Record summary:
Source: RMDB library OK3TST, as collected in RNAgym. Chemical mapping of a 207-nucleotide RNA with DMS and 2A3.
[RMDB]
RNA sequence: GGGAACGACUCGAGUAGAGUCGAAAAUUAGUGGAUGAUGGCACACAUUCUAUCUUGGGAACCAAAAGGAAUUACAUUUUCCUGCCAGGAGGAGUGUUCAAGUAAAUGAGAUGGGGAGGCAGGCUCUGUGGUUCUGGUAUAUUUUCCAGGGGGCAGCAGCCCACUAGUUUUUCGAAACUAGUGGGCUAAAAGAAACAACAACAACAAC
Reactivity to DMS in 0.01 (KOAc 150mM, MgCl2 10mM, bicine 150mM(pH8.5), 24C), signal-to-noise 1, nucleotides 027 to 156: u000u000a060g030u000g000g010a040u010g010a150u000g000g000c050a090c080a020c050a070u000u000c010u010a130u010c010u020u000g010g030g020a120a100c150c120a040a040a090a070g020g030a040a030u000u010a160c160a110u000u000u000u000c000c000u000g010c030c000a090g020g000a160g000g020a090g000u000g000u060u020c050a090a120g020u000a070a070a120u000g000a110g000a030u000g010g000g000g000a090g030g030c080a120g020g000c050u000c050u000g010u010g020g040u010u000c030u000g000g000u010a120u000a090u010u000u000u000c020c000a140g040g000g120g040g020c040a060g010c190
Reactivity to 2A3 in 0.01 (KOAc 150mM, MgCl2 10mM, bicine 150mM(pH8.5), 24C), signal-to-noise 1, nucleotides 027 to 156: u210u130a080g020u040g030g020a020u070g020a010u020g050g050c010a010c000a000c010a050u110u000c040u070a300u020c020u020u040g060g000g000a080a160c100c020a090a150a020a020g010g040a030a020u120u170a100c050a070u060u150u090u040c000c030u010g030c000c000a000g000g000a000g000g030a000g010u030g030u030u120c040a050a020g030u060a140a060a120u120g000a070g010a030u070g040g000g010g010a000g000g000c030a020g000g000c010u000c060u060g010u000g020g000u050u050c000u000g000g000u070a130u010a010u100u210u110u050c060c010a000g000g010g000g000g030c010a040g040c020
DMS adducts were read by reverse transcription with MarathonRT. For 2A3, 498 sequencing reads were counted.